[RMDB]
RNA sequence: GGGAACGACUCGAGUAGAGUCGAAAAGGCGUACAAAUCUUGCCCAAGGCAUUUCCCUGGACGUAAGCGAUGAUCCGAAAGGUAGCGACCAAAUGAGUAUGGAACAGGGCCAACUUCUGCCUGCAGCGAAAGAGAUGUGGUUCGCCACAUCUCUUUCAAAAGAAACAACAACAACAAC
Reactivity to DMS in 0.01 (KOAc 150mM, MgCl2 10mM, bicine 150mM(pH8.5), 24C), signal-to-noise 2, nucleotides 027 to 126: g010g040c070g090u000a060c140a060a120a060u000c020u020u000g000c010c020c040a160a080g020g000c080a050u000u000u000c030c000c000u000g000g000a110c080g000u000a070a090g020c020g000a060u000g020a050u000c020c020g000a080a070a060g000g010u000a030g010c110g000a130c010c060a010a050a110u020g000a060g030u000a090u010g000g010a110a110c070a040g000g000g000c250c060a050a080c100u000u000c040u000g000c000c000u000g030c140a080g000c210
Reactivity to 2A3 in 0.01 (KOAc 150mM, MgCl2 10mM, bicine 150mM(pH8.5), 24C), signal-to-noise 1, nucleotides 027 to 126: g010g000c060g070u140a020c120a040a110a070u010c010u040u060g040c040c040c000a010a010g000g020c040a040u010u040u040c000c000c000u010g010g030a000c050g050u100a030a080g050c030g110a160u060g010a030u000c020c050g070a080a050a000g020g010u040a030g000c020g050a050c000c030a080a000a060u230g000a050g040u060a080u050g000g030a060a070c030a030g000g030g000c000c000a030a070c060u220u050c020u060g020c000c000u040g000c030a050g110c050